Annotation
Structure probing data (2A3 and DMS) for a 177-nucleotide construct. Source: RMDB library M2PK90, as collected in RNAgym. For 2A3 the reverse transcriptase was SuperScript II with manganese. For DMS the reverse transcriptase was MarathonRT. High 2A3 reactivity points to a flexible backbone, as in loops and unpaired stretches. The reactions ran in a buffer of 150 mM KOAc, 10 mM MgCl2 and 150 mM bicine (pH 8.5), at 24 C.
RNA sequence: GGGAACGACUCGAGUAGAGUCGAAAACAUAUGACGGAGAGUGGAACACUCAGCGGAAACGCAUCCAAUGUCUGAAGUCUUUAAAGGGUAUAACAGUCAGUUGACCCAGAUCCCAACAGACAAUAAAACUACUAGAGCGUUUCGACGCUCUAGUAGUAAAAGAAACAACAACAACAAC
Reactivity to 2A3 in 0.01 (KOAc 150mM, MgCl2 10mM, bicine 150mM(pH8.5), 24C), signal-to-noise 1, nucleotides 027 to 126: c020a020u090a060u180g070a050c050g000g040a000g000a000g050u040g030g180a200a000c020a000c040u020c020a000g000c010g030g000a050a000a020c010g000c010a000u020c030c020a080a090u080g000u020c000u000g090a070a040g000u040c000u030u050u030a090a080a030g040g000g010u110a050u040a300a030c030a010g220u180c030a030g020u130u010g030a010c010c000c000a010g000a030u030c040c000c010a020a010c020a000g000a000c000a030a070u160a070a070a030
Reactivity to DMS in 0.01 (KOAc 150mM, MgCl2 10mM, bicine 150mM(pH8.5), 24C), signal-to-noise 2, nucleotides 027 to 126: c070a080u010a100u020g000a090c040g000g020a040g010a030g020u000g000g060a140a170c090a050c030u000c000a100g010c000g010g000a070a130a040c020g040c010a300u000c080c090a090a040u000g000u000c000u000g000a100a030g050u000c030u020u010u000a140a180a100g000g000g010u060a090u000a020a000c020a170g030u030c220a130g020u000u000g000a030c010c020c000a030g000a050u000c000c000c000a030a150c050a050g000a020c030a040a060u020a020a040a070